[RMDB]
An RNA of 207 nucleotides, treated with 2A3 and DMS and read out base by base. Values cover nucleotides 27 to 156.
RNA sequence: GGGAACGACUCGAGUAGAGUCGAAAAGUGCUACAGCAAUAUAGAUGUUUGGAAGUAAUUAACAGCGUGAGUGACAAAAUGCUACAGGACAUAGAAAAUCACUCCAUGGCUCUAUCAGAAGAUGCAUUGAAAGAGCUUACUGCCACCUUAGAGGGUAAAGCAUCUCUGUAUUCGUACAGAGAUGCUUAAAAGAAACAACAACAACAAC
Reactivity to 2A3 in 0.01 (KOAc 150mM, MgCl2 10mM, bicine 150mM(pH8.5), 24C), signal-to-noise 4, nucleotides 027 to 156: g060u050g020c020u050a040c020a030g030c030a120a040u090a020u080a150g060a090u050g120u130u110u090g080g010a040a020g030u070a060a080u150u040a080a080c020a030g040c030g050u140g010a020g000u030g000a000c010a050a180a010a020u070g000c020u060a090c040a080g030g090a010c020a050u060a020g110a030a080a000a030u010c000a010c020u000c050c020a090u080g040g000c000u000c010u020a070u060c050a030g040a120a030g030a030u180g020c010a060u040u100g020a040a060a010g010a000g000c000u010u020a030c040u020g010c010c000a030c040c010u020u030a030g040a110g050g000g020u070a060
Reactivity to DMS in 0.01 (KOAc 150mM, MgCl2 10mM, bicine 150mM(pH8.5), 24C), signal-to-noise 2, nucleotides 027 to 156: g010u000g000c010u000a080c040a080g010c070a040a090u000a130u020a110g000a080u000g010u000u000u000g010g000a090a190g000u000a040a060u020u000a100a130c060a070g020c080g050u020g000a060g050u000g000a050c020a040a050a090a070u000g010c030u000a080c100a080g030g010a070c050a100u000a090g000a050a090a100a110u000c020a020c000u010c020c060a100u000g000g010c000u010c050u000a070u000c020a170g010a070a080g030a110u000g030c070a130u000u010g020a100a100a070g030a070g020c000u000u000a030c060u000g020c020c030a040c010c010u000u000a090g020a100g000g000g010u010a040

For DMS the reverse transcriptase was MarathonRT. High DMS reactivity at an A or C suggests that its Watson-Crick edge is free. For 2A3, 1,900 sequencing reads were counted. The RNA was probed in 150 mM KOAc, 10 mM MgCl2 and 150 mM bicine (pH 8.5) at 24 C. For 2A3 the reverse transcriptase was SuperScript II with manganese. The DMS profile rests on 3,375 reads.